[RMDB]
RNA sequence: GGGAACGACUCGAGUAGAGUCGAAAAGACUCAUGGGAAGUCGGCGUGACUUUUGACUAAUGUGGAUGUCCGCUUUCUGGCUCUAGGUAUUUACUGUUGGUGCGGAGGUUGGUUAGUGGCGCGCCAACAUAGUCCGCAUUUUCGAAUGCGGACUAUGAAAAGAAACAACAACAACAAC
Reactivity to 2A3 in 0.01 (KOAc 150mM, MgCl2 10mM, bicine 150mM(pH8.5), 24C), signal-to-noise 6, nucleotides 027 to 126: g020a010c010u010c010a110u080g020g020g060a040a010g050u090c040g010g030c010g050u090g050a170c020u070u060u140u200g110a040c050u110a120a070u240g020u090g120g040a030u050g050u070c010c000g000c000u020u050u030c040u040g060g000c010u020c020u050a040g020g050u110a190u110u210u100a050c040u040g010u020u010g000g000u000g000c000g010g010a030g020g000u020u000g010g000u000u010a040g010u000g020g000c000g000c000g000c010c000a010a000
Reactivity to DMS in 0.01 (KOAc 150mM, MgCl2 10mM, bicine 150mM(pH8.5), 24C), signal-to-noise 7, nucleotides 027 to 126: g000a070c010u010c030a150u020g010g000g010a100a030g010u010c020g010g020c070g000u010g000a070c030u000u010u010u020g000a110c130u020a070a100u020g020u010g000g010a060u000g010u010c010c020g000c030u010u010u010c040u010g000g000c020u010c030u000a080g000g010u010a050u020u020u020a010c010u000g000u000u000g000g000u000g000c000g000g000a000g000g000u000u000g000g000u000u000a070g020u020g010g000c040g010c030g010c000c010a010a060
Annotation
Chemical mapping of a 177-nucleotide RNA with 2A3 and DMS. For DMS the reverse transcriptase was MarathonRT. Reactivities are given for positions 27 through 126. The data come from the RNA Mapping Database (RMDB), library OK1LIB.